[RMDB]
RNA sequence: GGGAACGACUCGAGUAGAGUCGAAAAAUUCAAUUUCAGUGUAUUGUGAUUGAAAACAAUUAGUUAAAUCACUAUUAAUGAAUGGUUGAACAUUUGAAUACAUGAUAAACUCCUUUGAUAUUGAAAAGUUAUUCUCCUGCUUCGGCAGGAGAAUAACAAAAGAAACAACAACAACAAC
Reactivity to 2A3 in 0.01 (KOAc 150mM, MgCl2 10mM, bicine 150mM(pH8.5), 24C), signal-to-noise 1, nucleotides 027 to 126: a000u050u010c010a000a000u080u030u070c070a010g010u040g000u050a030u000u000g090u000g000a030u000u000g090a020a020a000a020c160a020a050u300u180a050g000u050u160a000a000a000u000c000a000c040u040a080u000u300a120a000u110g150a000a010u040g110g000u030u050g070a050a050c070a060u000u030u000g000a000a000u010a050c020a000u030g110a070u130a150a120a000c050u010c010c000u210u150u110g260a230u090a120u150u070g010a000a080a000a000
Source: RMDB library OK1LIB, as collected in RNAgym. The record gives the reactivity of an RNA of 177 nucleotides to 2A3. For 2A3 the reverse transcriptase was SuperScript II with manganese. Values cover nucleotides 27 to 126. For 2A3, 467 sequencing reads were counted. The RNA was probed in 150 mM KOAc, 10 mM MgCl2 and 150 mM bicine (pH 8.5) at 24 C.